[RMDB]
RNA sequence: GGGAACGACUCGAGUAGAGUCGAAAAGAUAUGGAGACGUCGCAGCGGGAGCUGUCUUACACUAUUCUCUCGGAAACGAGAGAACGAAUGUAAGGCAGCGAAGAACGCUGCGACGUCUCCUAAGUCAUCGUAAGUAUUGGUUCGCCAAUACUUACGAAAAAGAAACAACAACAACAAC
Reactivity to DMS in 0.01 (KOAc 150mM, MgCl2 10mM, bicine 150mM(pH8.5), 24C), signal-to-noise 3, nucleotides 027 to 126: g000a030u000a300u010g000g000a030g030a010c000g010u000c000g020c010a010g000c000g000g000g010a120g030c000u000g000u000c000u000u010a000c000a010c100u000a300u000u000c000u000c000u010c000g000g010a080a100a170c010g000a020g010a000g020a000a000c060g020a050a040u000g000u000a000a000g010g000c000a010g000c000g000a030a100g000a150a160c000g000c000u010g010c010g000a000c000g010u000c000u000c010c000u000a010a040g000u010c020a180